[RMDB]
RNA sequence: GGGAACGACUCGAGUAGAGUCGAAAAUAGCUCAAGGGCGUACACAUCUUGCCUAUGGCAUUUCCCUGGACGUAAGCGGUGACCGCAAGGUAGCAACCUGGAGUUAGCUCGGCUGUGAGUACGUGCAACGAGACCCAGUGUUCGCACUGGGUCUCGUAAAAGAAACAACAACAACAAC
Reactivity to DMS in 0.01 (KOAc 150mM, MgCl2 10mM, bicine 150mM(pH8.5), 24C), signal-to-noise 1, nucleotides 027 to 126: u000a100g080c000u000c060a180a300g000g000g010c100g000u000a100c220a150c220a020u050c090u010u060g070c070c050u060a130u000g000g010c050a120u040u000u000c000c000c000u000g000g000a070c000g020u000a110a130g000c000g020g000u000g000a010c040c000g020c090a160a060g030g000u000a150g080c060a040a090c000c000u000g000g020a010g100u000u000a000g000c160u000c060g000g000c000u000g000u000g000a000g000u100a130c160g000u050g010c000a150